[RMDB]
This 177-nucleotide RNA was probed chemically with DMS. For DMS the reverse transcriptase was MarathonRT. The DMS profile rests on 897 reads. The reactions ran in a buffer of 150 mM KOAc, 10 mM MgCl2 and 150 mM bicine (pH 8.5), at 24 C.
RNA sequence: GGGAACGACUCGAGUAGAGUCGAAAAGAUAUGGAAUCUGUCAAAUAAUCCUUUGUAGGUAGCCUAGUAUCGGAAACGAUACGAAAGGCUAUAAUCUAUGAGGAUUAUUUGACAGAUUCCUAAGUCAGUUUAACAUACCCUUCGGGGUAUGUUAAACAAAAGAAACAACAACAACAAC
Reactivity to DMS in 0.01 (KOAc 150mM, MgCl2 10mM, bicine 150mM(pH8.5), 24C), signal-to-noise 1, nucleotides 027 to 126: g000a010u020a300u010g000g000a010a000u000c000u010g050u000c000a000a000a020u000a000a010u000c000c000u000u000u030g080u000a000g000g060u000a000g020c000c000u010a300g000u000a000u000c000g010g000a080a160a300c000g000a040u000a000c010g060a090a110a060g010g000c010u000a070u000a200a100u000c000u000a020u010g000a010g010g000a000u000u000a000u000u000u010g000a000c000a040g030a000u000u000c000c000u000a020a060g000u000c030a170